The record gives the reactivity of an RNA of 177 nucleotides to 2A3. For 2A3 the reverse transcriptase was SuperScript II with manganese.

RNA sequence: GGGAACGACUCGAGUAGAGUCGAAAACUGGGCCUUGCCUCCGAGCACGUCGUACUGGGAGGCCAGGUCCGCCACCACGUAUGACUGGGAUGCCAUGUCCCUGAGCUUGGAGCACUGCUCCUCCACCGGCUAUGCCCACAUUCGUGUGGGCAUAGCCAAAAGAAACAACAACAACAAC
Reactivity to 2A3 in 0.01 (KOAc 150mM, MgCl2 10mM, bicine 150mM(pH8.5), 24C), signal-to-noise 1, nucleotides 027 to 126: c030u020g000g000g000c040c010u010u000g000c010c020u000c000c020g170a020g060c040a030c290g300u290c100g050u150a040c020u070g010g000g000a000g000g000c000c000a000g020g000u000c000c000g010c000c000a060c010c010a070c010g160u190a150u250g050a040c090u090g000g000g000a020u080g140c070c060a140u260g100u050c000c000c000u010g040a030g030c060u060u070g020g000a060g010c040a060c300u130g010c000u020c000c000u060c020c010a130c000c060
Annotation
It was measured as part of the RMDB library OK2TRN. Conditions: 150 mM KOAc, 10 mM MgCl2 and 150 mM bicine (pH 8.5), 24 C.